Chemical mapping of a 177-nucleotide RNA with DMS. Conditions: 150 mM KOAc, 10 mM MgCl2 and 150 mM bicine (pH 8.5), 24 C. The DMS profile rests on 1,078 reads. DMS adducts were read by reverse transcription with MarathonRT. It was measured as part of the RMDB library OK2TRN.
RNA sequence: GGGAACGACUCGAGUAGAGUCGAAAAGUCCGCUGCUCACCGGCGAAGGCAUUCAGCUGGUCAAGAGCUUUUACCGACGGCCGCUGCAGGUCAGCGACGUGACGAGUGGGGUGUGCGCCACCGGCGGUCUAGGAGCCUCAUUCGUGAGGCUCCUAGAAAAAGAAACAACAACAACAAC
Reactivity to DMS in 0.01 (KOAc 150mM, MgCl2 10mM, bicine 150mM(pH8.5), 24C), signal-to-noise 1, nucleotides 027 to 126: g020u000c040c010g030c080u000g030c010u000c030a170c080c000g000g000c000g010a050a080g000g020c170a100u020u000c010a130g030c040u000g020g030u000c180a050a100g000a070g010c030u000u000u000u000a080c130c020g000a140c100g000g000c050c010g000c030u000g010c020a140g010g020u000c020a050g030c010g010a060c070g000u000g000a060c060g010a070g020u000g010g020g000g030u000g000u010g000c060g000c020c000a070c060c060g010g000c040g010g010